Structure probing data (2A3 and DMS) for a 177-nucleotide construct.
For DMS the reverse transcriptase was MarathonRT.
The reactions ran in a buffer of 150 mM KOAc, 10 mM MgCl2 and 150 mM bicine (pH 8.5), at 24 C.
2A3 adducts were read by reverse transcription with SuperScript II with manganese.
The DMS profile rests on 14,850 reads.
It was measured as part of the RMDB library OK2TST.
For 2A3, 11,591 sequencing reads were counted.

[RMDB]
RNA sequence: GGGAACGACUCGAGUAGAGUCGAAAAAUGUCGAGGUUCCAGUACCCACGCAUGUUGGUGAUCAAACCGGCCUUAUUCACCCGGUAGGUGAACACGCCGCGGACCUCACUGGUAAAGCCGCCGUCAAGACCAUAGGUAUAUUCGUAUACCUAUGGUCAAAAGAAACAACAACAACAAC
Reactivity to 2A3 in 0.01 (KOAc 150mM, MgCl2 10mM, bicine 150mM(pH8.5), 24C), signal-to-noise 7, nucleotides 027 to 126: a000u110g020u060c070g010a020g010g020u120u050c010c010a010g030u060a060c000c020c030a030c040g120c120a110u260g020u090u060g090g040u050g030a120u110c070a040a030a050c030c000g000g020c010c020u180u230a090u040u040c010a020c000c000c020g190g120u160a090g010g020u020g010a010a000c020a010c040g000c010c000g020c040g020g000a020c000c000u010c000a020c020u030g010g000u070a080a100a030g040c010c020g020c030c010g100u080c050a090a060
Reactivity to DMS in 0.01 (KOAc 150mM, MgCl2 10mM, bicine 150mM(pH8.5), 24C), signal-to-noise 9, nucleotides 027 to 126: a070u000g000u000c080g020a070g010g010u000u000c020c070a140g010u000a120c150c000c020a080c080g010c150a080u010g010u000u000g010g010u010g010a100u010c100a050a100a110c260c010g000g000c050c070u010u010a280u010u000c040a030c050c000c100g020g020u010a140g000g020u000g010a010a020c130a080c300g000c020c020g020c100g000g000a060c030c020u000c030a030c020u000g000g000u000a050a100a120g000c030c020g010c040c040g010u010c090a070a120